[RMDB]
RNA sequence: GGGAACGACUCGAGUAGAGUCGAAAAGAUCUGACGUUGUACGGUAUGGCCGUUCCUCCGGGUCCCUCUUUCAUAAAAAAUAUCCUCUAUCUCACCAUGCCGCGGUUCCUGUUUAACGUCUCCGAACCUCUUCCCGGUAAUUCGUUACCGGGAAGAGAAAAGAAACAACAACAACAAC
Reactivity to DMS in 0.01 (KOAc 150mM, MgCl2 10mM, bicine 150mM(pH8.5), 24C), signal-to-noise 1, nucleotides 027 to 126: g000a100u000c080u010g020a040c030g050u010u000g000u020a070c090g000g020u010a090u000g010g000c100c020g000u010u000c020c010u000c060c030g000g010g020u010c020c010c030u000c030u000u000u000c050a080u030a030a020a080a080a070a110u000a110u000c020c010u010c060u000a060u000c030u000c040a080c040c030a060u000g030c040c030g040c070g030g000u000u000c050c020u010g010u000u010u000a050a090c090g030u000c000u010c040c030g010a130a140c200
The record gives the reactivity of an RNA of 177 nucleotides to DMS. The RNA was probed in 150 mM KOAc, 10 mM MgCl2 and 150 mM bicine (pH 8.5) at 24 C.